[RMDB]
RNA sequence: GGGAACGACUCGAGUAGAGUCGAAAAAGACAUACGUUCGCGUAUGUCUGACGGGCACCUGACCCUAAGGAAAUGCUCUAUGACAGGACACACUGUUUGUGAUACCUCGAGAUUUCGAUCUCGAGAAACAGUGGUCCUGAUUCGUCAGGACCACUGUAAAAGAAACAACAACAACAAC
Reactivity to 2A3 in 0.01 (KOAc 150mM, MgCl2 10mM, bicine 150mM(pH8.5), 24C), signal-to-noise 2, nucleotides 027 to 126: a000g000a010c000a010u000a000c000g030u020u090c250g000c000g090u000a000u010g010u000c000u020g000a000c000g010g010g020c020a010c050c000u020g100a090c020c000c020u020a060a000g040g050a040a090a070u100g010c010u030c040u070a180u230g090a020c020a030g040g050a060c020a010c010a010c200u010g170u170u080u080g180u090g080a120u130a220c010c000u000c000g010a000g000a000u080u080u080c140g040a020u040c010u000c000g010a000g100a000a000
Reactivity to DMS in 0.01 (KOAc 150mM, MgCl2 10mM, bicine 150mM(pH8.5), 24C), signal-to-noise 3, nucleotides 027 to 126: a050g000a000c000a010u000a000c010g020u010u030c180g070c010g030u000a000u000g010u000c010u000g000a070c190g010g000g010c030a050c010c010u000g000a170c020c030c010u000a060a050g010g010a090a090a080u000g010c030u000c030u010a050u010g010a120c060a020g000g000a100c060a170c070a050c030u000g010u010u000u010g010u010g010a120u000a130c300c000u010c000g010a000g000a040u010u000u010c200g010a010u000c000u000c000g000a010g010a040a060

This 177-nucleotide RNA was probed chemically with 2A3 and DMS. For 2A3, 1,334 sequencing reads were counted. Values cover nucleotides 27 to 126. For DMS the reverse transcriptase was MarathonRT.